This 177-nucleotide RNA was probed chemically with 2A3 and DMS.
For DMS, 1,663 sequencing reads were counted.
For 2A3 the reverse transcriptase was SuperScript II with manganese.
Conditions: 150 mM KOAc, 10 mM MgCl2 and 150 mM bicine (pH 8.5), 24 C.
[RMDB]
RNA sequence: GGGAACGACUCGAGUAGAGUCGAAAAGAUAUGGAUGUGCUACCCACCUGUGUACACCGAAGAACUCGGAAACGAGGGAGGUGGUAGCAGAGGCACAUCCUAAGUCAAAUCACUGUUCGCAGUGAAAGUUAAUGGAAUCGUUCGCGAUUCCAUUAACAAAAGAAACAACAACAACAAC
Reactivity to 2A3 in 0.01 (KOAc 150mM, MgCl2 10mM, bicine 150mM(pH8.5), 24C), signal-to-noise 3, nucleotides 027 to 126: g130a060u200a230u280g000g000a000u000g010u000g020c010u180a300c000c020c000a040c010c010u000g020u020g270u300a030c010a000c000c090g180a300a050g000a040a030c000u010c020g000g050a080a040a070c010g000a020g040g000g000a010g020g000u010g020g010u000a010g010c000a000g000a000g000g000c010a000c010a000u000c000c000u000a010a010g060u060c120a070a030a200u050c000a010c000u010g050u110u090c300g020c070a010g000u020g060a160a030a040
Reactivity to DMS in 0.01 (KOAc 150mM, MgCl2 10mM, bicine 150mM(pH8.5), 24C), signal-to-noise 3, nucleotides 027 to 126: g000a160u020a210u000g000g050a020u000g000u000g010c010u000a170c030c040c010a300c140c020u010g000u000g000u010a300c010a040c000c000g000a120a150g000a140a230c000u000c000g010g030a030a120a100c010g040a040g000g000g000a070g000g000u000g000g000u020a300g000c000a030g000a080g030g000c030a010c000a020u000c000c000u010a010a100g010u030c120a070a080a090u010c000a010c000u000g000u000u000c120g020c010a030g010u000g010a010a120a120